[RMDB]
RNA sequence: GGGAACGACUCGAGUAGAGUCGAAAAGUUCUCUUAUCUUUUCUCUGAUAAAGAGGAGACCGCUGGACUCGCCGCCCCAGCCCGGGUAAGCCACAGUUCCGACCGAAGGGGACGAGUGGGGAGAAGGAAAGCAUGACCUUCGGGUCAUGCAAAAGAAACAACAACAACAAC
Reactivity to 2A3 in 0.01 (KOAc 150mM, MgCl2 10mM, bicine 150mM(pH8.5), 24C), signal-to-noise 2, nucleotides 027 to 129: g010u030u000c000u000c000u020u110a120u090c000u020u060u090u000c080u000c080u060g090a100u130a190a160a030g030a010g040g000a000g010a060c010c000g070c060u060g000g020a010c020u000c040g000c010c000g030c040c040c000c000a020g000c000c000c030g000g000g030u070a050a000g000c000c000a040c020a020g030u090u030c000c000g050a040c020c020g000a090a040g010g000g000g000a000c000g030a020g020u120g000g000g000g000a050g000a000a000g040g040a030a040a020
Reactivity to DMS in 0.01 (KOAc 150mM, MgCl2 10mM, bicine 150mM(pH8.5), 24C), signal-to-noise 3, nucleotides 027 to 129: g080u060u050c030u020c030u000u060a170u030c010u000u000u010u020c060u020c020u050g010a090u110a120a120a040g010a050g030g000a070g010a020c120c150g050c150u030g000g040a080c030u000c040g030c050c100g050c050c090c040c050a100g030c010c060c050g050g000g010u030a080a120g020c080c020a080c160a150g010u030u050c000c040g080a080c140c000g020a000a000g060g000g000g000a000c070g000a030g000u030g000g000g010g030a010g000a010a010g050g010a030a090a030
The record gives the reactivity of an RNA of 170 nucleotides to 2A3 and DMS. For DMS, 3,897 sequencing reads were counted. Source: RMDB library 15KLIB, as collected in RNAgym. 2A3 adducts were read by reverse transcription with SuperScript II with manganese.